[RMDB]
RNA sequence: GGGAACGACUCGAGUAGAGUCGAAAAGAGCGUUCCAAGGGCGUCGAAGCAAGACCGGAAGGACUUGUGGAGCGCUUGGAAGUGAGAAUGCCGGUAUGAGUAGCGAAAGAUGGGUGAGAAUCCCAUCGCGCCAUGAUUAUUUCGAUAAUCAUGGCGCAAAAGAAACAACAACAACAAC
Reactivity to 2A3 in 0.01 (KOAc 150mM, MgCl2 10mM, bicine 150mM(pH8.5), 24C), signal-to-noise 1, nucleotides 027 to 126: g040a030g020c010g080u050u020c010c010a030a000g100g110g000c070g040u300c040g140a020a000g000c000a000a000g020a050c000c000g070g070a000a100g010g010a010c000u040u010g010u010g000g000a020g000c050g020c030u000u000g020g000a020a030g070u080g070a090g050a130a090u130g030c000c030g000g030u110a080u290g080a040g060u140a050g030c040g090a000a100a030g000a030u010g000g010g020u000g000a030g000a000a010u030c000c000c000a000u010c010
Reactivity to DMS in 0.01 (KOAc 150mM, MgCl2 10mM, bicine 150mM(pH8.5), 24C), signal-to-noise 2, nucleotides 027 to 126: g000a110g000c010g020u000u000c010c010a020a050g000g000g020c010g000u000c120g000a200a230g020c000a020a010g030a120c000c000g030g060a160a150g000g040a070c000u010u000g000u000g000g020a200g000c010g010c000u000u000g000g000a040a070g010u020g020a060g010a040a060u000g000c020c010g000g000u000a030u020g020a070g030u000a010g000c070g000a070a090a180g000a020u000g000g010g000u010g000a120g000a300a110u000c000c000c000a000u000c000
Description:
Chemical mapping of a 177-nucleotide RNA with 2A3 and DMS. For DMS, 1,541 sequencing reads were counted. The RNA was probed in 150 mM KOAc, 10 mM MgCl2 and 150 mM bicine (pH 8.5) at 24 C.